[RMDB]
The data come from the RNA Mapping Database (RMDB), library OK3TST. An RNA of 207 nucleotides, treated with 2A3 and DMS and read out base by base. Values are in units of 0.01, from 0 to 300, in steps of 10. For DMS, 1,617 sequencing reads were counted. The reactions ran in a buffer of 150 mM KOAc, 10 mM MgCl2 and 150 mM bicine (pH 8.5), at 24 C. For 2A3 the reverse transcriptase was SuperScript II with manganese.
RNA sequence: GGGAACGACUCGAGUAGAGUCGAAAAAAAGCUACCAAGGUCACCCCUAUAAAGAAAUAUUUCUUUACAUCCAUUAGAAUGAUAACAGUAAGCGCUGACAUCUCUUGAGCUCCUACCAUGUGCUAGCCAUGAUUCUAGACUCUUGACACAUAUUAACGAAUAUAUUUACAUUCGUGUAAAUAUAUUCAAAAGAAACAACAACAACAAC
Reactivity to 2A3 in 0.01 (KOAc 150mM, MgCl2 10mM, bicine 150mM(pH8.5), 24C), signal-to-noise 3, nucleotides 027 to 156: a000a000a020g060c040u030a020c040c010a040a000g010g030u070c030a070c030c040c040c040u050a080u160a160a080a040g070a020a110a010u200a080u020u130u010c000u050u060u000a050c020a100u010c040c000a040u080u100a040g060a130a090u130g060a080u070a150a030c000a010g070u070a100a010g020c030g000c060u020g010a040c010a080u010c030u000c000u040u030g020a020g040c030u040c020c010u020a070c000c060a030u150g020u030g020c020u000a010g040c000c070a050u120g000a040u070u030c010u020a040g010a060c010u050c000u060u100g060a020c020a010c000a040u300a060u300u300a090a000c030
Reactivity to DMS in 0.01 (KOAc 150mM, MgCl2 10mM, bicine 150mM(pH8.5), 24C), signal-to-noise 1, nucleotides 027 to 156: a060a070a110g030c060u000a050c080c030a070a060g020g000u000c010a070c030c020c040c150u000a090u000a030a040a080g010a040a090a200u010a080u000u000u010c000u000u000u000a090c000a040u000c040c030a080u010u000a080g050a140a060u010g030a100u010a130a100c020a100g000u000a070a110g000c060g060c010u030g000a080c010a020u000c040u020c030u000u000g020a080g000c050u000c000c010u040a040c020c010a070u000g030u000g020c060u020a110g000c010c020a070u010g000a150u000u000c010u000a140g020a080c020u010c030u000u010g000a240c050a050c110a050u000a070u010u010a080a110c100